[RMDB]
RNA sequence: GGGAACGACUCGAGUAGAGUCGAAAAGAUAUGGACCACCAUGAAGUUCAACAGCGCUCUUCGGAAACGAAGAGCGACAUGAACCAUGUGUGGUCCUAAGUCAAACCAUUCGGUUCGCCGAAUGGAAGCUAAUGCUAGUGUUCGCACUAGCAUUAGCAAAAGAAACAACAACAACAAC
Reactivity to 2A3 in 0.01 (KOAc 150mM, MgCl2 10mM, bicine 150mM(pH8.5), 24C), signal-to-noise 3, nucleotides 027 to 126: g030a010u070a040u100g000g000a000c000c000a000c000c000a020u030g170a300a100g020u050u070c040a110a070c050a300g100c010g000c010u000c010u030u000c020g050g040a110a060a030c000g000a010a010g000a000g000c000g010a020c010a020u080g010a000a010c010c010a020u030g300u040g010u000g060g000u010c010c000u000a000a010g000u000c010a010a020a060c010c010a000u020u010c020g010g100u060u070c300g050c100c000g010a000a010u010g000g000a040a000
Reactivity to DMS in 0.01 (KOAc 150mM, MgCl2 10mM, bicine 150mM(pH8.5), 24C), signal-to-noise 3, nucleotides 027 to 126: g030a050u000a300u000g000g000a010c000c000a010c010c000a000u010g000a130a180g020u000u000c010a040a110c300a200g000c000g010c000u010c000u010u010c000g000g020a130a110a270c000g020a030a030g000a000g000c020g010a010c080a160u000g010a010a020c020c000a000u010g000u000g060u000g000g020u000c000c000u010a010a080g010u000c030a160a110a210c000c000a000u000u000c000g020g020u010u040c300g000c000c000g000a020a000u000g000g000a030a070